RNA sequence: GGGAACGACUCGAGUAGAGUCGAAAAAAGGUUCUGGUGAGCAAUAUUAGCAAUCAUUGGUCGCGCCUGGCGACGUAUUCUUUUACCCAGAUUCACGGCCCGGACAUCUCGUCCAUCACGGCUCGCCCCCAUAAGUGGUCUUCGGACCACUUAUGGGAAAAGAAACAACAACAACAAC
Reactivity to 2A3 in 0.01 (KOAc 150mM, MgCl2 10mM, bicine 150mM(pH8.5), 24C), signal-to-noise 4, nucleotides 027 to 126: a000a030g100g000u060u030c020u030g020g000u070g010a070g040c050a070a150u100a090u280u200a070g060c020a000a080u170c040a080u070u230g100g000u010c010g000c000g040c090c130u060g050g000c000g010a000c010g000u020a040u030u070c030u000u120u030u080a100c020c030c010a010g030a130u080u100c050a020c060g050g000c000c000c010g030g010a000c000a080u100c060u040c100g040u030c020c000a000u050c030a010c040g010g000c000u000c030g010c000c000
Reactivity to DMS in 0.01 (KOAc 150mM, MgCl2 10mM, bicine 150mM(pH8.5), 24C), signal-to-noise 2, nucleotides 027 to 126: a010a010g000g000u030u000c020u020g020g070u020g000a050g020c050a170a040u070a030u000u000a110g010c100a050a110u060c140a110u010u000g000g020u000c000g000c060g000c180c010u000g000g000c100g020a050c040g000u020a040u000u010c000u050u000u040u010a040c110c070c010a080g000a090u020u020c190a120c070g000g000c060c080c160g000g030a080c040a010u020c140u000c130g050u000c030c010a050u000c050a070c300g000g020c020u020c050g010c040c040